[RMDB]
RNA sequence: GGGAACGACUCGAGUAGAGUCGAAAAUCCACAGUAUGCAUAUGGUGAUUUAGGGUUACCUGGUUUAAUCACUGCACAUACCAGGUUAAUUGUUUUAAUUGAAGCUUCAAAUCAAUUCGAUACAAGACCCGUAGUAGCAUUUCGAUGCUACUACGGGAAAAGAAACAACAACAACAAC
Reactivity to DMS in 0.01 (KOAc 150mM, MgCl2 10mM, bicine 150mM(pH8.5), 24C), signal-to-noise 1, nucleotides 027 to 126: u000c000c000a110c140a160g040u010a020u000g000c050a040u010a210u000g000g010u000g020a040u000u000u000a080g030g010g010u000u000a030c020c000u000g000g010u000u000u020a040a060u000c020a040c050u000g010c210a080c050a070u000a010c010c040a050g000g000u000u010a040a120u010u000g010u000u000u000u000a060a050u000u000g000a040a110g000c160u000u010c180a050a100a090u000c050a020a010u000u020c090g040a010u010a060c040a040a110g000a160
Structure probing data (DMS) for a 177-nucleotide construct. Source: RMDB library OK2TRN, as collected in RNAgym.